[RMDB]
RNA sequence: GGGAACGACUCGAGUAGAGUCGAAAAAAAGGCUUAUCAAGAGAGGUGGAGGGACUGGCCCCAUGAAACCCGGCAGCCAGAAAUGGUGCCAAUUCCUGCAGCGGAAACGUUGAAAGAUGAGCCGAAACACACAGUGUAAGUUCGCUUACACUGUGUGAAAAGAAACAACAACAACAAC
Reactivity to 2A3 in 0.01 (KOAc 150mM, MgCl2 10mM, bicine 150mM(pH8.5), 24C), signal-to-noise 1, nucleotides 027 to 126: a000a000a000g010g000c010u010u010a030u000c060a130a020g050a010g020a050g140g020u030g030g060a010g000g010g000a000c040u010g040g010c000c040c000c000a070u070g030a050a060a030c020c010c000g060g010c010a050g140c040c000a020g030a010a070a000u020g010g000u000g020c010c000a000a020u020u000c010c010u040g060c010a010g030c010g000g010a060a070a030c020g010u040u050g040a050a090a010g000a010u020g000a000g000c000c000g010a010a020a000
Reactivity to DMS in 0.01 (KOAc 150mM, MgCl2 10mM, bicine 150mM(pH8.5), 24C), signal-to-noise 1, nucleotides 027 to 126: a080a070a090g010g010c010u010u010a000u000c020a160a100g010a210g010a120g010g000u020g000g000a050g010g000g000a060c080u000g000g000c000c020c000c040a080u010g020a110a100a080c070c010c040g030g020c000a030g010c040c050a050g000a040a110a060u000g000g010u000g000c040c000a010a110u000u010c000c000u000g010c000a040g000c020g000g000a110a050a070c030g050u020u010g000a120a100a090g010a010u000g010a040g000c010c000g000a090a050a120